Structure probing data (DMS and 2A3) for a 177-nucleotide construct.
For DMS, 1,387 sequencing reads were counted.
For DMS the reverse transcriptase was MarathonRT.
2A3 adducts were read by reverse transcription with SuperScript II with manganese.
[RMDB]
RNA sequence: GGGAACGACUCGAGUAGAGUCGAAAAAAAGAUAUGGACUCCUAACAUAUCUUGGAUUUAAUGUGCGCAUAGUUCGGAAACGAACUAUGGAAGCACAUUUGUCAGAUAAAGGAGUCCUAAGUCAAAACCAUAAUCGUGAGUUCGCUCACGAUUAUGGAAAAGAAACAACAACAACAAC
Reactivity to DMS in 0.01 (KOAc 150mM, MgCl2 10mM, bicine 150mM(pH8.5), 24C), signal-to-noise 2, nucleotides 027 to 126: a110a070a080g010a030u000a300u000g000g000a000c010u000c000c010u000a110a220c300a210u020a020u010c000u000u030g010g000a020u010u010u000a000a000u010g020u010g020c020g030c000a010u000a010g000u040u000c000g010g010a120a050a180c010g000a000a010c000u000a000u000g000g000a070a220g030c000a010c000a000u000u000u000g020u000c010a030g000a010u020a030a100a020g010g000a020g000u000c000c010u000a020a080g010u000c010a050a060a090a150
Reactivity to 2A3 in 0.01 (KOAc 150mM, MgCl2 10mM, bicine 150mM(pH8.5), 24C), signal-to-noise 2, nucleotides 027 to 126: a000a000a000g060a000u060a060u090g000g010a000c010u000c010c010u050a260a010c050a150u200a020u070c040u030u230g170g000a020u290u300u280a060a010u000g000u010g000c140g000c190a000u000a010g030u020u020c010g010g050a030a090a100c000g000a000a000c000u000a000u000g000g000a040a060g010c010a000c000a000u000u010u020g000u000c010a000g000a010u030a070a190a010g000g000a000g010u000c000c000u020a060a000g060u010c000a030a000a070a200
For 2A3, 2,377 sequencing reads were counted. The RNA was probed in 150 mM KOAc, 10 mM MgCl2 and 150 mM bicine (pH 8.5) at 24 C. Source: RMDB library TTRDES, as collected in RNAgym.